[RMDB]
RNA sequence: GGGAACGACUCGAGUAGAGUCGAAAAGCAGCUUUGACGUUGACACCUACCCUACUGGAACGAAUCGAAGGUAUAGAAUACGAGGUUUAUUACGAUAUCGCCGGAGUCCCUACCGUAUGCAGCGGAAUAACCGGGCCGGACGUCAUACCUGGUAAGACCCCUUAAAACCUUUCGAGGUUUUAAGGGGAAAAGAAACAACAACAACAAC
Reactivity to DMS in 0.01 (KOAc 150mM, MgCl2 10mM, bicine 150mM(pH8.5), 24C), signal-to-noise 1, nucleotides 027 to 156: g070c080a130g000c150u000u000u000g010a020c100g000u010u010g060a110c040a060c020c060u000a090c000c010c030u010a080c120u000g040g020a000a130c040g030a100a080u010c020g000a130a060g020g000u020a060u000a180g030a140a300u000a110c140g000a140g030g000u000u000u000a060u080u010a040c060g030a060u000a040u010c040g040c010c000g010g010a270g010u000c040c020c010u000a130c040c030g080u000a030u000g040c000a230g030c030g040g020a130a130u000a040a100c010c000g020g020g000c020c020g010g000a030c020g020u000c040a110u000a030c010c020u030g020g010u010a030a110g000a240
Reactivity to 2A3 in 0.01 (KOAc 150mM, MgCl2 10mM, bicine 150mM(pH8.5), 24C), signal-to-noise 1, nucleotides 027 to 156: g040c050a000g020c010u120u050u070g040a020c000g010u000u030g030a020c010a010c010c010u070a110c000c000c020u030a060c020u100g070g010a110a040c030g030a130a090u040c000g020a080a000g060g000u090a130u080a190g100a110a020u050a040c070g050a030g000g020u070u230u120a040u070u050a020c010g040a040u000a000u230c080g000c050c000g030g000a020g060u010c030c000c010u020a060c000c000g010u010a060u200g030c010a000g010c070g010g030a030a050u210a110a050c050c030g010g000g040c010c020g060g000a010c000g010u020c000a020u020a040c000c000u030g000g000u010a000a000g070a040

This 207-nucleotide RNA was probed chemically with DMS and 2A3. For DMS, 1,644 sequencing reads were counted. It was measured as part of the RMDB library OK3TST.